[RMDB]
RNA sequence: GGGAACGACUCGAGUAGAGUCGAAAAGCGGUUUUUAACAAGGUGCCAGUACCGCGUUAACGACUGUCACUUAGAACUGGAUCGCAGUGAAGCCUGCCUGGGGUGGAUCAGCUAAACUUUUACAGGAUCGCGCUUUUCGUCCCGCCCGCUGGGCUGUCUAACUCUAUGGGUUCGCCCAUAGAGUUAGAAAAGAAACAACAACAACAAC
Reactivity to 2A3 in 0.01 (KOAc 150mM, MgCl2 10mM, bicine 150mM(pH8.5), 24C), signal-to-noise 5, nucleotides 027 to 156: g010c010g000g020u050u050u040u080u170a080a040c050a040a040g020g000u020g020c040c000a030g020u060a140c050c050g040c040g040u070u130a050a060c050g060a020c020u040g030u060c020a030c070u050u110a040g040a160a030c030u010g040g010a070u090c050g010c070a030g000u010g040a040a010g020c000c020u020g020c060c060u070g010g000g010g010u030g020g010a030u040c030a000g040c040u120a050a130a110c040u100u120u140u170a060c060a020g060g030a060u070c080g010c000g010c090u040u030u040u080c030g040u030c010c000c010g000c000c020c020g230c090u190g010g000g020c020u030g030u030

Source information
Conditions: 150 mM KOAc, 10 mM MgCl2 and 150 mM bicine (pH 8.5), 24 C. Chemical mapping of a 207-nucleotide RNA with 2A3. For 2A3 the reverse transcriptase was SuperScript II with manganese. For 2A3, 2,847 sequencing reads were counted.